[RMDB]
RNA sequence: GGGAACGACUCGAGUAGAGUCGAAAAGGUAAUGGACGACGGCGGCGUGUGGCGAACAGGGAUACCGGUAGUCAGUGUCUGGAACAUCCCAAGGGGCGGCGGAGCUACCACCCCGACACGUUAAGGCAAAACUUCGCACGGUUCGCCGUGCGAAGAACUUCUCAACUUGGUUCGCCAAGUUGAGAAGAAAAGAAACAACAACAACAAC
Reactivity to 2A3 in 0.01 (KOAc 150mM, MgCl2 10mM, bicine 150mM(pH8.5), 24C), signal-to-noise 1, nucleotides 027 to 156: g000g030u140a110a020u110g000g010a030c020g000a000c000g010g030c020g030g000c060g060u070g030u020g000g010c040g020a020a060c080a070g000g010g030a020u040a140c020c000g030g020u040a020g060u040c100a010g080u070g060u170c070u040g000g010a080a070c030a110u050c040c000c010a010a030g050g000g000g000c000g000g010c040g040g070a020g000c060u090a060c000c010a040c000c000c000c000g020a000c040a020c050g060u070u140a050a030g040g000c010a010a030a050a100c000u000u010c000g000c000a000c030g020g010u010u040c140g000c050c000g000u000g020c000g000a010a000g000a000a000
Conditions: 150 mM KOAc, 10 mM MgCl2 and 150 mM bicine (pH 8.5), 24 C. Chemical mapping of a 207-nucleotide RNA with 2A3. For 2A3, 688 sequencing reads were counted. Source: RMDB library M2RFPK, as collected in RNAgym. Reactivities are given for positions 27 through 156.